[RMDB]
RNA sequence: GGGAACGACUCGAGUAGAGUCGAAAAGAUAUGGAUGUACAGGGAGCUCGUAUUCGGAAACGAAUACUGAGCGAAGAACUGUCACAUCCUAAGUCAAAAGAUCUGUGCAGUUCGCUGCACAGAUCAACUCUAGACAGAUGUUCGCAUCUGUCUAGAGAAAAGAAACAACAACAACAAC
Reactivity to DMS in 0.01 (KOAc 150mM, MgCl2 10mM, bicine 150mM(pH8.5), 24C), signal-to-noise 2, nucleotides 027 to 126: g010a010u000a020u000g000g010a020u000g010u000a030c000a000g020g000g020a010g000c000u020c030g000u000a010u000u000c000g030g000a010a000a010c000g010a000a000u000a000c040u010g020a010g020c000g020a070a140g000a210a270c000u000g000u000c300a000c030a000u010c010c000u000a000a090g010u010c010a120a110a130a140g020a000u000c010u010g000u000g010c000a010g010u000u020c250g000c010u000g020c000a000c010a000g010a000u000c000a020a090
Reactivity to 2A3 in 0.01 (KOAc 150mM, MgCl2 10mM, bicine 150mM(pH8.5), 24C), signal-to-noise 1, nucleotides 027 to 126: g000a010u000a000u040g010g000a010u000g000u000a020c000a000g010g030g000a010g000c000u000c000g010u000a000u000u010c000g000g040a000a000a000c000g010a000a010u000a010c030u140g010a000g000c000g010a040a010g000a010a000c000u000g000u040c070a000c000a040u000c000c000u000a000a000g010u010c000a000a170a020a140g000a010u000c000u050g000u000g000c000a020g010u080u190c260g160c230u000g000c010a000c000a010g000a000u000c000a000a000

Conditions: 150 mM KOAc, 10 mM MgCl2 and 150 mM bicine (pH 8.5), 24 C. Structure probing data (DMS and 2A3) for a 177-nucleotide construct. Reactivities are given for positions 27 through 126. High DMS reactivity at an A or C suggests that its Watson-Crick edge is free.